[RMDB]
RNA sequence: GGGAACGACUCGAGUAGAGUCGAAAAGUGAGUAGAACAAUUUCAUAUUGAAAAAAGUAAAAUUGUCCUCUAUAUAACUGUUCUAUUCACAGAAACGUCUGGAAGGCAGUUCGCUGCCUUCCAGACGGUAUCAAGUAACGUUCGCGUUACUUGAUACAAAAGAAACAACAACAACAAC
Reactivity to DMS in 0.01 (KOAc 150mM, MgCl2 10mM, bicine 150mM(pH8.5), 24C), signal-to-noise 2, nucleotides 027 to 126: g030u000g000a010g010u000a000g000a020a030c000a020a020u000u010u010c090a040u000a010u000u010g000a000a030a080a180a050a060g010u030a100a110a090a110u000u000g000u010c160c030u010c010u000a010u000a050u000a070a050c100u000g000u000u000c000u000a000u000u000c010a010c000a140g010a070a090a270c050g010u000c000u010g000g020a020a010g000g020c010a010g010u000u030c240g040c000u000g000c010c000u000u000c000c000a000g000a000c000g000
The record gives the reactivity of an RNA of 177 nucleotides to DMS. DMS adducts were read by reverse transcription with MarathonRT.